Overview
This 207-nucleotide RNA was probed chemically with DMS and 2A3.

RNA sequence: GGGAACGACUCGAGUAGAGUCGAAAACUUUUUACAAUGUACUAUUGAGCAUUUUAAACUUUCCUAAUGUAAGACUAUUUUUGUUUGAAUUACAAUAAAAUGGGAAGAUGUUAUUAGGCAGUAGAUUUCUUAAUAAAGAGCAUAACUCUCCAUUUUAGUAGCGUAAAUUAUUCGUAAUUUACGCUACAAAAGAAACAACAACAACAAC
Reactivity to DMS in 0.01 (KOAc 150mM, MgCl2 10mM, bicine 150mM(pH8.5), 24C), signal-to-noise 1, nucleotides 027 to 156: c010u000u040u000u000u000a120c060a170a080u010g030u000a180c010u000a090u000u010g040a130g030c000a120u000u010u030u000a000a070a050c040u000u000u010c060c040u010a150a150u000g010u000a130a130g010a170c060u020a120u000u000u000u000u000g000u040u020u010g040a200a130u000u000a070c020a060a080u010a020a050a100a060u000g010g000g010a030a010g010a170u000g010u000u000a090u000u010a090g020g000c100a040g000u000a150g000a170u000u000u000c040u000u010a070a130u000a050a010a060g020a050g060c040a060u000a040a130c020u000c010u000c000c020a130u000u000u000u000a100
Reactivity to 2A3 in 0.01 (KOAc 150mM, MgCl2 10mM, bicine 150mM(pH8.5), 24C), signal-to-noise 2, nucleotides 027 to 156: c020u050u060u050u040u050a080c060a040a030u030g010u070a150c050u130a090u230u170g030a030g000c020a020u000u050u130u150a060a120a060c000u050u040u030c000c000u060a130a100u080g040u070a080a040g040a030c090u080a110u080u230u030u150u070g040u000u060u020g040a080a080u150u050a020c020a010a020u090a020a010a030a000u010g000g000g000a080a020g000a020u060g030u080u060a100u030u050a050g050g000c030a000g040u100a040g030a100u120u290u100c030u090u040a020a020u120a080a130a060g030a010g000c010a000u010a110a020c000u010c000u000c040c060a030u170u200u040u110a020
The reactions ran in a buffer of 150 mM KOAc, 10 mM MgCl2 and 150 mM bicine (pH 8.5), at 24 C.